[RMDB]
RNA sequence: GGGAACGACUCGAGUAGAGUCGAAAAGAUCUGGUGACUCUGGUCCCCACCUGGACCUCUCUUGGACCUGGUGACUCUCUUUCCAACAUGGACCUCACAUGGAGCUGGUGACUCUGGUCCUCAGUUUGGCCUCACCUGGACCUGGCGUCUCUCGUCCUAAUAGUCUAAGGUUCGCCUUAGACUAUUAAAAAGAAACAACAACAACAAC
Reactivity to 2A3 in 0.01 (KOAc 150mM, MgCl2 10mM, bicine 150mM(pH8.5), 24C), signal-to-noise 5, nucleotides 027 to 156: g030a070u050c040u120g030g040u060g030a020c020u030c050u120g040g010u030c030c000c020c010a040c000c030u050g050g030a100c020c030u080c020u040c060u120u150g050g010a090c000c000u010g000g000u020g020a050c010u010c010u010c020u130u160u050c020c020a030a030c020a130u060g010g030a040c010c020u110c050a140c040a170u240g050g000a020g020c030u030g010g050u030g020a040c020u020c070u100g020g000u010c000c000u030c020a040g010u030u070u120g030g000c000c000u030c000a040c010c020u020g020g010a010c000c020u020g030g010c020g080u020c020u000c010u020c050g030u020c000c010
Reactivity to DMS in 0.01 (KOAc 150mM, MgCl2 10mM, bicine 150mM(pH8.5), 24C), signal-to-noise 3, nucleotides 027 to 156: g020a070u000c020u010g020g020u000g020a070c050u020c060u000g050g010u000c010c010c030c030a120c070c050u000g030g010a050c020c010u000c090u000c080u010u010g010g000a090c050c020u000g010g000u000g010a080c050u000c050u000c040u000u000u000c030c030a050a140c090a120u000g030g000a050c020c010u010c080a100c110a190u000g010g010a070g010c020u000g030g010u000g010a090c020u000c030u000g010g020u000c020c020u000c080a080g010u010u010u000g010g010c040c010u000c020a050c030c020u000g010g010a080c040c010u010g010g010c070g010u000c020u000c010u000c020g010u000c080c060
An RNA of 207 nucleotides, treated with 2A3 and DMS and read out base by base. For 2A3 the reverse transcriptase was SuperScript II with manganese. The RNA was probed in 150 mM KOAc, 10 mM MgCl2 and 150 mM bicine (pH 8.5) at 24 C. High DMS reactivity at an A or C suggests that its Watson-Crick edge is free. For DMS, 11,563 sequencing reads were counted. For DMS the reverse transcriptase was MarathonRT. The 2A3 profile rests on 5,266 reads.